An RNA of 177 nucleotides, treated with 2A3 and DMS and read out base by base. As a SHAPE reagent, 2A3 marks flexible, mostly unpaired nucleotides at the ribose 2'-OH. For DMS the reverse transcriptase was MarathonRT. The reactions ran in a buffer of 150 mM KOAc, 10 mM MgCl2 and 150 mM bicine (pH 8.5), at 24 C.
RNA sequence: GGGAACGACUCGAGUAGAGUCGAAAAGAUAUGGAGAACAGCAACAGCUCGCAUUCGGAAACGAAUGGCGAGACAUGCUGUCCUCCUAAGUCAAAGUCUGAAGGUAGGUUCGCCUACCUUCAGACAAGAGGGGAACGUAGUUCGCUACGUUCCCCUCAAAAGAAACAACAACAACAAC
Reactivity to 2A3 in 0.01 (KOAc 150mM, MgCl2 10mM, bicine 150mM(pH8.5), 24C), signal-to-noise 1, nucleotides 027 to 126: g010a020u070a010u070g000g000a000g010a010a000c000a020g000c000a000a090c030a300g040c000u000c000g000c000a000u010u000c000g010g020a020a000a020c010g000a010a000u090g300g040c000g030a010g160a030c000a020u010g000c020u010g010u000c010c010u000c000c010u000a010a020g030u030c050a170a000a090g000u000c000u000g010a010a000g000g000u010a010g000g050u000u080c230g110c030c000u020a000c010c020u000u000c000a000g000a000c000a000a000
Reactivity to DMS in 0.01 (KOAc 150mM, MgCl2 10mM, bicine 150mM(pH8.5), 24C), signal-to-noise 2, nucleotides 027 to 126: g000a010u000a240u010g000g010a000g000a020a000c000a000g000c010a020a090c230a190g020c000u000c000g010c000a030u010u000c000g000g000a040a030a140c010g020a010a000u000g020g020c010g000a020g010a050c090a160u010g000c010u000g020u000c000c000u000c000c000u000a010a060g000u000c030a080a140a130g020u000c000u000g000a010a010g000g030u000a010g010g000u000u020c210g040c010c000u000a000c000c000u000u000c000a000g000a000c000a020a010